[RMDB]
Chemical mapping of a 207-nucleotide RNA with 2A3 and DMS. For 2A3 the reverse transcriptase was SuperScript II with manganese. It was measured as part of the RMDB library RSTRND. The RNA was probed in 150 mM KOAc, 10 mM MgCl2 and 150 mM bicine (pH 8.5) at 24 C. For DMS, 5,490 sequencing reads were counted. For 2A3, 12,641 sequencing reads were counted.
RNA sequence: GGGAACGACUCGAGUAGAGUCGAAAAGAAGCUGUUCUAACAAAUAGAGUUGACUGCAUCGGUAAGGGAAUUCUUUCCUUUUAUCCAAACGACAGAAAGGAUGACCUUGUAUACGUACGUAUACAUACUGAAACAUCAAACGAUUAAUCACGACUCGCUUCCUAGAUUAGUUCGCUAAUCUAGGAAGAAAAGAAACAACAACAACAAC
Reactivity to 2A3 in 0.01 (KOAc 150mM, MgCl2 10mM, bicine 150mM(pH8.5), 24C), signal-to-noise 9, nucleotides 027 to 156: g080a050a020g020c050u050g040u090u030c060u120a110a070c060a070a110a100u160a060g040a020g020u020u040g050a080c060u060g010c030a040u040c040g050g020u060a040a030g030g000g020a010a020u060u010c010u020u030u030c020c000u050u110u090u110a110u060c050c030a110a090a050c080g070a020c020a050g020a020a020a000g010g000a010u020g060a060c000c000u030u040g010u000a010u000a000c050g130u060a030c120g000u000a010u000a000c010a010u070a040c040u060g060a080a080a040c040a060u100c070a100a090a040c060g020a030u070u160a070a040u100c060a030c100g050a020c010u010c020g000
Reactivity to DMS in 0.01 (KOAc 150mM, MgCl2 10mM, bicine 150mM(pH8.5), 24C), signal-to-noise 3, nucleotides 027 to 156: g020a080a180g030c010u000g010u000u000c050u000a120a160c050a050a050a160u000a120g000a060g000u000u000g010a110c010u010g000c080a150u000c010g030g030u000a100a050g010g020g020a160a050u000u000c090u030u010u000c010c010u000u000u000u000a130u000c060c070a050a100a170c120g020a080c100a040g020a080a030a080g010g000a050u010g000a260c010c050u000u000g000u000a010u000a000c010g010u000a060c130g040u000a010u000a010c010a160u000a130c050u000g030a090a120a100c040a080u000c010a050a070a080c040g000a140u000u000a080a050u000c050a080c050g030a070c040u000c030g000